Source: RMDB library OK1LIB, as collected in RNAgym. Structure probing data (2A3 and DMS) for a 177-nucleotide construct. For DMS, 4,039 sequencing reads were counted. The 2A3 profile rests on 7,592 reads.

RNA sequence: GGGAACGACUCGAGUAGAGUCGAAAAGCACGGAGUUGCCGGCGAGCUUUGACCUUGCCAUCGGCAACCCGCCUUUCUCGGACCGGACCGUCCGUUCCGACCGCGCCUAUCGCUCGCUCGGGAUGCGCGGUCAGUCACCGUUCGCGGUGACUGACCGAAAAGAAACAACAACAACAAC
Reactivity to 2A3 in 0.01 (KOAc 150mM, MgCl2 10mM, bicine 150mM(pH8.5), 24C), signal-to-noise 9, nucleotides 027 to 126: g040c040a010c060g010g020a300g060u000u000g000c010c010g010g000c010g010a020g000c050u200u260u300g090a200c030c000u010u030g020c000c010a170u220c120g000g000c000a000a010c000c010c000g020c010c000u120u130u030c060u000c000g020g010a060c050c030g050g050a060c040c050g140u090c010c010g020u020u000c010c000g010a030c030c030g080c020g010c010c010u080a070u080c020g010c020u020c010g020c020u050c020g040g010g010a070u110g060c070g000
Reactivity to DMS in 0.01 (KOAc 150mM, MgCl2 10mM, bicine 150mM(pH8.5), 24C), signal-to-noise 3, nucleotides 027 to 126: g010c210a240c000g000g010a210g020u000u010g000c020c040g020g000c010g000a060g000c080u030u020u010g000a090c300c000u000u020g040c040c010a180u040c110g020g010c000a000a000c000c010c020g000c300c020u000u000u020c100u010c040g000g040a060c020c070g000g000a210c090c170g030u010c040c000g000u000u000c000c010g000a040c190c040g010c030g000c010c080u010a240u040c030g000c000u010c000g020c050u000c020g000g000g000a050u000g000c060g000
Background:
DMS adducts were read by reverse transcription with MarathonRT.